The record gives the reactivity of an RNA of 177 nucleotides to DMS.
For DMS, 1,780 sequencing reads were counted.
The reactions ran in a buffer of 150 mM KOAc, 10 mM MgCl2 and 150 mM bicine (pH 8.5), at 24 C.
RNA sequence: GGGAACGACUCGAGUAGAGUCGAAAAAAGAAAGUCGAGUCAUUGCAGUCCAGCAGGUUCGACUGAUACGCUCCUCCUACAUGAAAAAGGUAGAGGAACAGGCCCUGGGUGCCAGGUCGACUCUGGGUUGGUGGUAGUUCUUCGGAACUACCACCAAAAAAGAAACAACAACAACAAC
Reactivity to DMS in 0.01 (KOAc 150mM, MgCl2 10mM, bicine 150mM(pH8.5), 24C), signal-to-noise 2, nucleotides 027 to 126: a000a030g000a080a070a030g050u000c020g010a020g030u010c000a130u030u050g030c030a110g000u050c160c060a110g000c050a020g000g080u000u000c000g000a050c000u040g040a070u020a050c180g030c040u020c000c000u010c050c060u000a020c000a030u020g000a070a050a170a190a190g000g030u000a000g020a080g000g010a020a030c070a120g050g000c060c000c010u050g030g020g000u030g000c000c050a020g040g010u020c110g010a090c130u080c000u000g000g030g050